[RMDB]
RNA sequence: GGGAACGACUCGAGUAGAGUCGAAAAGGUGGGGGAGGUGUGUAUCCAGGGGCCCAACGUGACGGAUGGGUAUUUGAACCGCCCCGACGCCAACAAGGAGGCAUUCAUUGGGGGGUGGUUCAGGACAAUUGAGAGUCACAUUCGUGUGACUCUCAAUAAAAGAAACAACAACAACAAC
Reactivity to DMS in 0.01 (KOAc 150mM, MgCl2 10mM, bicine 150mM(pH8.5), 24C), signal-to-noise 2, nucleotides 027 to 126: g010g030u010g000g000g010g000g000a050g000g000u010g010u020g000u000a070u010c080c080a090g000g030g010g000c010c020c030a020a060c070g040u000g010a140c120g000g010a150u000g000g010g000u000a070u030u000u000g010a010a010c000c000g030c010c010c000c010g000a070c190g010c020c010a110a180c130a140a110g040g030a100g020g020c100a070u000u030c130a230u030u020g000g000g000g000g000g000u000g030g000u000u000c000a050g010g010a100c140a040

The record gives the reactivity of an RNA of 177 nucleotides to DMS. Reactivities are given for positions 27 through 126. Conditions: 150 mM KOAc, 10 mM MgCl2 and 150 mM bicine (pH 8.5), 24 C. The data come from the RNA Mapping Database (RMDB), library OK2TRN. The DMS profile rests on 1,248 reads. In probing experiments dimethyl sulfate is read out at A N1 and C N3, which are open when not base-paired.